[RMDB]
Structure probing data (2A3 and DMS) for a 177-nucleotide construct.

RNA sequence: GGGAACGACUCGAGUAGAGUCGAAAAUUGGCGUCAUAAGGUGUGGUGCUACCAUGAUUGUCUUAUAUACAACACCAUAACAGAUGAAGAAGUCCAUACGAGAGGGCUGACCGGUAUAGAGGUAACAGGCGAUGUCUAAUUUCGAUUAGACAUCGCCAAAAGAAACAACAACAACAAC
Reactivity to 2A3 in 0.01 (KOAc 150mM, MgCl2 10mM, bicine 150mM(pH8.5), 24C), signal-to-noise 1, nucleotides 027 to 126: u030u060g060g030c030g010u000c070a000u020a250a040g030g010u110g060u090g080g020u060g060c000u050a100c000c000a030u130g000a130u150u050g000u000c070u130u060a150u000a010u010a160c030a130a010c000a000c020c020a000u080a050a100c050a000g170a140u050g020a080a050g070a040a000g000u000c030c020a010u030a220c040g030a040g020a080g030g000g000c000u020g000a060c050c010g000g030u100a060u040a060g070a020g070g080u000a090a000c020a000
Reactivity to DMS in 0.01 (KOAc 150mM, MgCl2 10mM, bicine 150mM(pH8.5), 24C), signal-to-noise 1, nucleotides 027 to 126: u010u000g070g070c000g010u020c070a040u010a040a120g000g010u030g010u000g000g000u000g000c000u030a160c160c060a060u020g000a070u010u050g010u000c070u010u020a040u000a170u010a040c160a040a060c040a000c000c010a030u010a090a090c090a120g010a120u000g000a040a090g000a030a020g000u010c010c020a080u010a130c120g000a080g040a170g020g010g010c030u010g000a060c070c090g060g010u020a070u000a060g000a090g010g010u020a030a030c140a100
Conditions: 150 mM KOAc, 10 mM MgCl2 and 150 mM bicine (pH 8.5), 24 C.